RNA sequence: GGGAACGACUCGAGUAGAGUCGAAAACCCGCAAGCGAGGGCCUGGUCGAUUAGUGAGACCAGGUGCGACGCGGGGGCUACAGCCCGGCCUCAGCGAGGUCCCCUCGGUAGGUGCCUUCCGCGUCACUUUCGCAUGUUAGUUCGCUAACAUGCGAAAAAAAGAAACAACAACAACAAC
Reactivity to 2A3 in 0.01 (KOAc 150mM, MgCl2 10mM, bicine 150mM(pH8.5), 24C), signal-to-noise 4, nucleotides 027 to 126: c010c000c000g000c050a110a080g070c030g110a050g010g090g000c000c000u000g010g030u000c010g050a120u120u190a130g150u110g130a040g000a040c000c000a000g000g000u010g000c010g000a000c000g000c000g010g000g000g000g000c010u090a060c030a020g040c000c000c000g020g000c010c000u030c010a120g130c080g080a010g000g030u160c030c030c020c020u060c060g020g010u070a070g020g040u030g010c020c000u260u200c030c010g000c000g000u000c000a010c000
Reactivity to DMS in 0.01 (KOAc 150mM, MgCl2 10mM, bicine 150mM(pH8.5), 24C), signal-to-noise 2, nucleotides 027 to 126: c050c000c010g020c150a130a130g030c060g010a110g000g020g000c000c000u000g010g010u000c000g010a230u070u060a160g010u010g010a300g010a010c000c030a000g000g010u000g020c020g000a000c020g000c000g000g040g010g010g000c000u040a030c020a140g000c020c000c110g010g000c000c000u020c000a170g020c140g000a010g000g000u010c040c070c050c070u000c020g010g020u020a050g020g010u010g000c010c000u000u040c010c010g000c010g000u000c000a010c050